Conditions: 150 mM KOAc, 10 mM MgCl2 and 150 mM bicine (pH 8.5), 24 C.
Structure probing data (2A3 and DMS) for a 207-nucleotide construct.
For DMS the reverse transcriptase was MarathonRT.
2A3 adducts were read by reverse transcription with SuperScript II with manganese.
Values cover nucleotides 27 to 156.
[RMDB]
RNA sequence: GGGAACGACUCGAGUAGAGUCGAAAACUGUCUCAGUGUUCAUCCCCUGAUCAAGGAUGCCCGAAACGGUGAGACGGAAAGCAAAUUAAAUAACGUCAACCCAUCGGGACGGUUGGCCAGUUAAGAAAAAACCGGGGAGUCUUCGGACUCCCCGGAACAGUGUAAUUAUCUUCGGAUAAUUACACUGAAAAGAAACAACAACAACAAC
Reactivity to 2A3 in 0.01 (KOAc 150mM, MgCl2 10mM, bicine 150mM(pH8.5), 24C), signal-to-noise 3, nucleotides 027 to 156: c020u020g040u050c020u010c040a200g260u040g030u080u050c010a020u020c010c000c000c000u050g010a050u050c010a020a010g010g000a020u030g010c000c010c010g050a040a040a020c030g000g030u010g000a060g000a010c050g060g030a160a060a000g030c090a090a030a120u200u190a060a090a110u210a090a020c010g000u000c000a000a000c000c000c010a010u020c010g040g000g010a000c010g020g000u010u000g010g010c030c020a070g040u090u090a090a110g070a080a140a030a030a010a000c030c000g000g000g000g000a000g010u010c000u030u040c060g010g000a000c000u000c020c010c000c010g000g010a000a000
Reactivity to DMS in 0.01 (KOAc 150mM, MgCl2 10mM, bicine 150mM(pH8.5), 24C), signal-to-noise 1, nucleotides 027 to 156: c020u010g010u030c000u000c000a070g030u000g010u000u010c040a040u000c000c000c030c010u020g010a100u010c070a100a080g010g010a120u000g010c070c060c050g040a040a070a050c070g010g040u000g020a120g010a070c010g010g010a040a140a150g030c050a070a080a210u010u010a060a100a110u000a070a070c040g040u000c000a060a010c020c000c010a220u000c060g000g070g040a070c180g000g000u000u020g020g010c060c060a090g040u000u010a080a210g010a000a130a110a080a050a110c010c000g040g010g050g000a070g030u000c000u000u000c220g010g000a040c000u000c000c000c000c000g000g010a000a020